The record gives the reactivity of an RNA of 177 nucleotides to DMS and 2A3. The data come from the RNA Mapping Database (RMDB), libraries RFM100 and RFMREP.
[RMDB]
RNA sequence: GGGAACGACUCGAGUAGAGUCGAAAAGAAAGAAAGAUCAAACUAAAGACGUUGGAAUUUAUGAAUAACAUCUGAAUCGGAAUACUAGCUUGUCCUAGGAUCCAUAUUCACUGCGACAUAGAUUCAAAAGACGUUAACUGUUCGCAGUUAACGUCUUAAAAGAAACAACAACAACAAC
Reactivity to DMS in 0.01 (KOAc 150mM, MgCl2 10mM, bicine 150mM(pH8.5), 24C), signal-to-noise 3, nucleotides 027 to 126: g000a070a090a090g020a080a030a060g000a060u010c070a050a100a150c080u000a090a110a050g010a080c080g000u000u000g000g010a040a020u000u020u010a010u010g010a070a070u010a160a220c040a040u020c110u000g020a040a030u000c300g010g020a050a020u010a260c010u010a030g010c060u000u020g000u020c190c000u010a010g010g000a110u000c000c010a080u000a070u000u010c000a020c100u000g010c050g000a060c030a000u000a010g000a010u000u000c010a050a070
Reactivity to 2A3 in 0.01 (KOAc 150mM, MgCl2 10mM, bicine 150mM(pH8.5), 24C), signal-to-noise 4, nucleotides 027 to 126: g140a030a040a010g110a040a030a010g080a020u170c070a060a050a140c050u190a170a120a050g100a020c120g010u050u080g050g010a040a050u010u010u010a030u010g090a220a120u090a070a000c010a010u090c020u090g000a010a020u060c070g000g030a030a050u210a300c000u000a000g040c070u210u300g050u120c010c000u000a010g030g000a000u000c000c000a010u040a040u240u010c010a000c060u020g010c050g030a030c010a000u000a000g040a040u000u000c010a060a000